[RMDB]
RNA sequence: GGGAACGACUCGAGUAGAGUCGAAAAGUACUCAGAAAUGAGUAGAAAUAAAAGGCGAACUCUCUCGACGCCGAAUGAUCGAAAGAUCAGAACCUCACGAUAGAGAGAGGAAUUGUGAGGAAAGAAAGGGAUCAAACAUGUUCGCAUGUUUGAUCCCAAAAGAAACAACAACAACAAC
Reactivity to 2A3 in 0.01 (KOAc 150mM, MgCl2 10mM, bicine 150mM(pH8.5), 24C), signal-to-noise 1, nucleotides 027 to 126: g010u000a000c000u020c000a030g000a160a210a020u040g000a000g000u000a000g040a000a090a000u280a010a090a040a000g000g000c000g010a030a060c000u000c000u000c020u010c110g040a010c000g010c000c010g090a130a120u070g000a010u000c000g030a030a040a040g000a000u000c030a000g030a020a020c000c000u030c000a020c000g050a050u050a070g090a010g000a030g020a030g090g060a050a030u040u060g020u000g000a040g020g140a080a000a040g150a000a000a000
Reactivity to DMS in 0.01 (KOAc 150mM, MgCl2 10mM, bicine 150mM(pH8.5), 24C), signal-to-noise 1, nucleotides 027 to 126: g000u000a000c000u000c000a090g010a160a050a190u000g000a000g030u000a000g020a100a060a030u020a110a090a200a100g110g030c000g000a130a080c000u000c000u000c000u000c000g000a140c010g000c000c000g020a140a060u000g000a000u000c000g020a100a030a110g000a030u060c020a060g050a050a180c000c000u000c030a010c010g040a000u000a060g000a040g000a020g000a060g000g020a080a070u000u000g000u000g000a060g010g010a060a150a040g000a140a020a040